Chemical mapping of a 177-nucleotide RNA with DMS and 2A3. The reactions ran in a buffer of 150 mM KOAc, 10 mM MgCl2 and 150 mM bicine (pH 8.5), at 24 C. It was measured as part of the RMDB library OK1LIB. High DMS reactivity at an A or C suggests that its Watson-Crick edge is free.
RNA sequence: GGGAACGACUCGAGUAGAGUCGAAAAAGCGAAGAGGUCGGCCUGACGCUGGAGAACGCCGACCUGUCGCUGCUAGGCAAGGCCCGCAAGGUCGUGGUCACCAAGGACGAGACCACCAUCGUCGAGGAUUCCUAGACCCCUUCGGGGGUCUAGGAAUAAAAGAAACAACAACAACAAC
Reactivity to DMS in 0.01 (KOAc 150mM, MgCl2 10mM, bicine 150mM(pH8.5), 24C), signal-to-noise 3, nucleotides 027 to 126: a040g000c000g010a050a030g020a020g000g000u000c000g000g000c010c070u000g030a230c110g010c120u030g000g010a080g050a160a190c300g000c000c010g000a000c000c000u000g020u000c010g000c000u010g000c120u010a070g020g030c060a030a050g000g000c000c000c020g050c060a220a120g000g020u000c080g070u000g010g000u000c020a280c080c060a050a100g000g020a080c150g010a150g000a080c020c040a060c050c120a040u000c010g000u000c010g030a190g010g000
Reactivity to 2A3 in 0.01 (KOAc 150mM, MgCl2 10mM, bicine 150mM(pH8.5), 24C), signal-to-noise 2, nucleotides 027 to 126: a010g020c030g000a060a050g110a000g240g000u000c000g000g010c000c000u040g100a050c060g050c230u140g050g050a170g090a130a000c000g000c000c000g000a000c000c000u000g000u000c020g000c000u000g000c030u070a020g040g040c030a090a040g020g020c020c000c000g000c090a080a250g110g000u090c010g070u030g070g000u080c090a030c100c010a080a080g070g000a000c020g000a020g040a070c020c020a030c000c010a040u020c020g070u000c050g080a060g160g000